[RMDB]
RNA sequence: GGGAACGACUCGAGUAGAGUCGAAAACCCCAUAAUUUCGAUUAUGGGGAAAGGUAAACAGGCUAGGACCGGCCUGAUAAAGGUCCGAACAAAUAAUUAAAAUCUAGGUUGUAUUCGUACAACCUAACUUUAAUUGAACGUUCGCGUUCAAUUAAAGAAAAGAAACAACAACAACAAC
Reactivity to DMS in 0.01 (KOAc 150mM, MgCl2 10mM, bicine 150mM(pH8.5), 24C), signal-to-noise 1, nucleotides 027 to 126: c010c000c000c000a000u000a000a000u000u000u000c090g030a010u000u010a010u000g000g020g010g020a020a060a050g010g010u010a070a110a100c180a010g040g000c000u000a160g020g010a010c000c010g000g000c000c010u000g010a060u000a010a040a160g000g010u000c000c010g010a090a100c140a090a090a090u010a030a120u020u000a060a030a070a060u030c090u000a020g010g010u010u010g000u000a000u010u010c210g070u000a000c000a010a010c010c000u000a000a010
Reactivity to 2A3 in 0.01 (KOAc 150mM, MgCl2 10mM, bicine 150mM(pH8.5), 24C), signal-to-noise 2, nucleotides 027 to 126: c020c000c000c020a000u020a020a010u020u100u120c220g040a010u000u010a000u000g010g010g000g050a080a070a010g110g010u160a140a040a120c040a090g000g000c000u080a060g050g010a000c020c000g000g040c000c010u050g070a030u190a000a120a020g000g000u010c000c010g030a020a000c010a030a120a050u230a090a040u220u170a040a090a010a090u020c050u040a020g010g000u000u000g000u020a040u000u110c190g010u000a000c000a010a000c010c000u000a000a030

This 177-nucleotide RNA was probed chemically with DMS and 2A3.
For 2A3, 1,715 sequencing reads were counted.
For DMS the reverse transcriptase was MarathonRT.
High DMS reactivity at an A or C suggests that its Watson-Crick edge is free.